[RMDB]
RNA sequence: GGGAACGACUCGAGUAGAGUCGAAAAGGGUGAUGUGUCCUAACCUUUAUCAAUGGGGGCACUCGGUCGUGCUGUGGGUAGAAAUUUUAUUUCGUGCCUACCUUAGACGCUUGUCGUCGGGAGUAUGUGGGACUGAUGAACUUCGGUUCAUCAGUAAUGUAUGUGGAUGAUUCGUCAUCCACAUACAAAAAGAAACAACAACAACAAC
Reactivity to DMS in 0.01 (KOAc 150mM, MgCl2 10mM, bicine 150mM(pH8.5), 24C), signal-to-noise 2, nucleotides 027 to 156: g000g020g050u000g000a090u000g040u000g010u000c020c020u000a050a080c040c030u020u010u000a200u010c140a070a110u000g010g010g030g010g020c040a010c020u000c040g030g020u010c050g030u000g000c050u000g020u000g020g030g030u000a300g010a020a020a060u010u000u010u000a060u030u020u000c040g020u010g000c030c020u000a020c020c090u000u010a100g000a060c030g030c070u000u000g020u000c000g000u010c000g010g000g040a150g010u010a040u000g020u020g000g030g020a030c000u000g000a030u000g010a030a000c010u000u000c300g050g020u000u000c000a010u000c000a000g000u000a010a160
Reactivity to 2A3 in 0.01 (KOAc 150mM, MgCl2 10mM, bicine 150mM(pH8.5), 24C), signal-to-noise 3, nucleotides 027 to 156: g020g000g010u050g010a130u100g020u020g000u010c000c010u060a110a090c040c000u130u110u100a260u270c170a110a150u170g030g000g000g000g020c000a010c000u020c040g080g000u020c020g040u050g070c090u070g000u020g050g000g030u020a040g090a010a040a020u120u240u140u150a180u030u050u050c040g040u060g020c000c000u000a010c010c020u000u050a060g000a010c010g000c030u120u270g080u270c010g000u000c000g020g010g000a040g040u080a070u150g040u130g010g020g020a000c010u010g000a000u000g000a010a000c000u020u080c170g060g000u010u000c000a010u000c000a000g000u040a010a070
Structure probing data (DMS and 2A3) for a 207-nucleotide construct.
For DMS, 5,855 sequencing reads were counted.
As a SHAPE reagent, 2A3 marks flexible, mostly unpaired nucleotides at the ribose 2'-OH.
Source: RMDB library M2RFPK, as collected in RNAgym.